Structure probing data (2A3 and DMS) for a 177-nucleotide construct.
For 2A3, 1,110 sequencing reads were counted.
It was measured as part of the RMDB library RFMREP.

[RMDB]
RNA sequence: GGGAACGACUCGAGUAGAGUCGAAAAAGUAAUUGUUAGUGAUAACUCGUAUCGGAAAAUAGGGAAAGGUUAUAGAAGGAUGGAGUUUCUAUAAAGCAUUUACCCUAUCUGUUAUCACCUAACGCAAUCUAAAUUAGUGCUUCGGCACUAAUUUAGAAAAAGAAACAACAACAACAAC
Reactivity to 2A3 in 0.01 (KOAc 150mM, MgCl2 10mM, bicine 150mM(pH8.5), 24C), signal-to-noise 1, nucleotides 027 to 126: a010g160u140a040a070u210u100g000u030u020a000g000u010g000a010u020a000a000c000u020c130g090u180a150u260c020g050g060a220a010a020a000u010a000g010g000g000a010a020a020g020g000u020u010a030u020a040g000a010a010g040g070a040u240g150g090a160g070u030u000u000c010u000a010u000a040a040a030g080c030a050u030u010u110a250c000c000c020u000a010u000c020u000g000u020u000a010u010c010a020c030c000u010a010a000c020g000c030a010a020
Reactivity to DMS in 0.01 (KOAc 150mM, MgCl2 10mM, bicine 150mM(pH8.5), 24C), signal-to-noise 2, nucleotides 027 to 126: a090g020u000a050a120u000u040g010u000u000a010g020u000g010a020u000a020a000c010u000c190g020u010a120u010c220g030g010a090a090a080a060u000a020g000g000g000a050a040a030g010g000u000u000a020u020a010g000a020a020g010g000a100u020g030g000a180g000u010u000u000c000u010a010u000a010a020a070g000c070a120u000u010u000a130c000c000c020u000a010u010c080u000g020u000u000a010u000c000a000c240c110u000a000a020c020g020c300a090a080